RNA sequence: GGGAACGACUCGAGUAGAGUCGAAAAACACGCUGCUACGGCAGCGUGAGGGAGGGGAGGUGGGCGCGCGAUUGGGUUGCGAUCUGGAGCAGUGGGGACAGGUCAGACGUCCUCUACGGAGGACGAAAAUAAGUCUUAUGUUCGCAUAAGACUUAUUAAAAGAAACAACAACAACAAC
Reactivity to DMS in 0.01 (KOAc 150mM, MgCl2 10mM, bicine 150mM(pH8.5), 24C), signal-to-noise 4, nucleotides 027 to 126: a160c000a010c010g010c000u010g000c000u010a120c220g030g000c000a010g010c000g030u000g020a070g000g000g000a130g010g000g010g000a080g010g020u040g000g000g000c090g000c020g000c030g000a060u000u010g010g010g000u010u020g020c040g010a060u010c060u020g000g000a220g010c090a070g010u010g010g000g000g000a140c070a060g000g010u010c060a080g000a200c020g000u010c000c000u000c000u000a070c170g030g000a010g000g010a020c010g000a010a030
Reactivity to 2A3 in 0.01 (KOAc 150mM, MgCl2 10mM, bicine 150mM(pH8.5), 24C), signal-to-noise 7, nucleotides 027 to 126: a000c010a000c000g000c010u010g010c020u040a040c220g160g010c000a000g000c000g000u000g000a010g010g050g050a230g010g010g000g010a060g040g040u210g040g060g000c050g000c010g000c010g050a090u070u080g070g000g040u040u080g020c050g020a050u010c020u040g040g000a050g060c070a050g060u070g070g020g000g000a020c020a040g000g040u040c010a030g020a070c010g000u000c040c000u000c010u010a040c240g070g000a000g010g000a000c000g010a020a000
Structure probing data (DMS and 2A3) for a 177-nucleotide construct.
The reactions ran in a buffer of 150 mM KOAc, 10 mM MgCl2 and 150 mM bicine (pH 8.5), at 24 C.
For DMS the reverse transcriptase was MarathonRT.
The DMS profile rests on 13,928 reads.
The 2A3 profile rests on 8,050 reads.